[RMDB]
RNA sequence: GGGAACGACUCGAGUAGAGUCGAAAAUUCCGUUACCGUCACCGUCACCGGCAGUGACUAAAGGAGUUUUGAUCAACUUCGAAGACGUUAACGGUAAAGUGUGGAGGUUCCGUUACUCAUACUGGAACUACGUCGAGACAUUCGUGUCUCGACGUAGAAAAGAAACAACAACAACAAC
Reactivity to DMS in 0.01 (KOAc 150mM, MgCl2 10mM, bicine 150mM(pH8.5), 24C), signal-to-noise 3, nucleotides 027 to 126: u010u000c020c000g040u000u000a000c080c010g000u010c010a200c300c300g030u000c010a020c040c060g010g000c160a170g000u000g000a020c000u010a090a060a290g000g020a010g010u000u000u010u000g030a190u030c090a020a010c000u010u030c000g010a200a080g020a020c010g000u000u000a010a000c010g000g010u010a030a060a010g020u010g030u020g000g030a080g000g000u010u000c010c010g000u010u000a080c090u020c150a060u000a040c020u000g040g020a070a120
Reactivity to 2A3 in 0.01 (KOAc 150mM, MgCl2 10mM, bicine 150mM(pH8.5), 24C), signal-to-noise 1, nucleotides 027 to 126: u050u010c000c000g010u000u010a000c000c020g000u000c040a030c080c060g030u010c010a020c050c000g300g000c090a070g010u000g010a000c020u060a000a110a020g010g010a000g000u040u040u040u090g120a120u150c060a000a010c010u000u020c030g060a150a030g010a000c020g010u010u000a000a000c000g030g030u050a100a070a030g080u070g080u120g040g110a040g010g000u020u110c020c010g000u000u080a040c030u100c070a050u030a130c020u070g000g000a070a000